[RMDB]
RNA sequence: GGGAACGACUCGAGUAGAGUCGAAAAGAGGGAUCCACCGAUGAGUCCGGUCGCGGGACUCCUCGGGACAACCACAGCGACUGGGAUCGUCAUCUCGGCUAGUUCGCGUGACCGGGAGAUCCGAGCAGAGGCAUAGCGAACUGCGCACGGAGAAGCCGAUUGUUUAGAUGUUCGCAUCUAAACAAUCAAAAGAAACAACAACAACAAC
Reactivity to DMS in 0.01 (KOAc 150mM, MgCl2 10mM, bicine 150mM(pH8.5), 24C), signal-to-noise 2, nucleotides 027 to 156: g010a180g000g020g000a140u020c040c010a070c000c000g010a030u000g000a060g020u000c000c030g050g040u020c060g000c060g050g030g010a050c020u010c000c040u020c000g050g000g000a110c080a060a170c050c070a300c000a120g020c000g010a070c020u030g000g020g010a040u000c050g030u000c060a050u000c020u000c000g000g000c010u000a110g000u000u000c040g030c020g000u000g000a100c030c000g000g000g020a070g000a020u000c010c010g000a180g020c060a060g010a020g020g020c030a130u030a070g010c020g020a020a030c040u000g040c050g020c010a120c050g030g010a120g010a080a140g020c090c080
Reactivity to 2A3 in 0.01 (KOAc 150mM, MgCl2 10mM, bicine 150mM(pH8.5), 24C), signal-to-noise 3, nucleotides 027 to 156: g130a030g020g090g030a060u050c030c010a010c000c020g000a010u000g000a000g010u000c020c010g040g020u000c020g000c000g020g000g000a000c010u010c000c000u010c000g010g020g020a020c040a040a070c070c040a010c020a020g010c010g000a000c010u020g000g000g000a010u010c010g010u010c020a020u010c010u000c000g000g020c010u040a050g020u010u010c010g010c010g010u010g010a080c000c010g000g020g000a020g000a000u000c010c000g000a000g010c190a010g010a010g000g020c060a100u180a030g000c000g000a000a000c010u030g040c050g010c020a080c100g100g050a100g020a090a020g080c080c060